[RMDB]
This 177-nucleotide RNA was probed chemically with 2A3 and DMS.

RNA sequence: GGGAACGACUCGAGUAGAGUCGAAAAUCAAACUGGGUAUCUACUGGUUGCUAGCUGGUACGGGCUGGAGUGGAGCUCAGUGGUGCUCACUUGGCUGCACACAGGCCUGAGUCUCCAUCCCUAGCACCCUAAUGAACCGGUUCGCCGGUUCAUUAGGAAAAGAAACAACAACAACAAC
Reactivity to 2A3 in 0.01 (KOAc 150mM, MgCl2 10mM, bicine 150mM(pH8.5), 24C), signal-to-noise 3, nucleotides 027 to 126: u100c020a040a050a070c060u070g020g000g070u140a120u100c060u130a050c020u050g060g030u060u050g000c010u020a020g020c010u030g020g030u050a030c000g010g030g000c000u010g070g000a110g030u020g020g090a010g000c000u020c020a000g000u010g020g010u130g090c080u070c090a040c040u050u090g040g000c020u120g060c020a010c000a010c010a040g130g000c050c000u010g010a000g060u040c020u000c020c000a090u060c040c000c000u000a020g030c010a060c000
Reactivity to DMS in 0.01 (KOAc 150mM, MgCl2 10mM, bicine 150mM(pH8.5), 24C), signal-to-noise 3, nucleotides 027 to 126: u010c100a060a080a080c070u000g010g000g010u000a060u000c110u010a090c100u010g000g010u000u000g020c030u010a050g000c140u010g020g020u000a110c090g010g010g020c010u000g010g020a160g020u000g000g000a010g010c000u000c150a020g020u000g020g020u010g000c170u010c030a060c060u000u000g010g010c010u000g000c010a010c020a080c240a120g000g000c040c010u010g000a100g020u010c090u000c030c020a060u010c070c120c010u000a030g010c050a060c170

Conditions: 150 mM KOAc, 10 mM MgCl2 and 150 mM bicine (pH 8.5), 24 C. Values cover nucleotides 27 to 126.